[RMDB]
RNA sequence: GGGAACGACUCGAGUAGAGUCGAAAACUUAUUAGUAACUAAUCCAAAGCAAGUAUAGGAGAACAGGUUUUUAACUAUUUUCAGGCAGAUAAAAAAUAGUAUUUGACAGUCUAACACUAACUGAACACCACGCUCUCUUACUUCGGUAAGAGAGCAACCAUCUUGUCAGGUUCGCCUGACAAGAUGGAAAAGAAACAACAACAACAAC
Reactivity to 2A3 in 0.01 (KOAc 150mM, MgCl2 10mM, bicine 150mM(pH8.5), 24C), signal-to-noise 2, nucleotides 027 to 156: c000u090u080a020u100u150a250g060u040a060a080c030u020a090a070u060c070c070a120a030a020g050c010a020a050g010u110a050u080a100g000g030a040g010a040a020c040a030g070g000u060u010u030u040u100a010a010c010u020a030u020u070u020u040c030a000g020g010c020a030g020a120u180a050a040a010a000a010a010u070a010g040u030a150u040u030u090g030a030c000a000g010u020c020u050a080a010c040a040c070u050a090a000c020u070g060a080a020c050a040c110c030a050c060g010c000u000c000u000c000u000u000a000c000u010u020c080g060g000u000a000a000g010a000g000a000g020c010a000a000
Chemical mapping of a 207-nucleotide RNA with 2A3. 2A3 adducts were read by reverse transcription with SuperScript II with manganese. Reactivities are rounded to 0.1 and cut off at 0 and 3.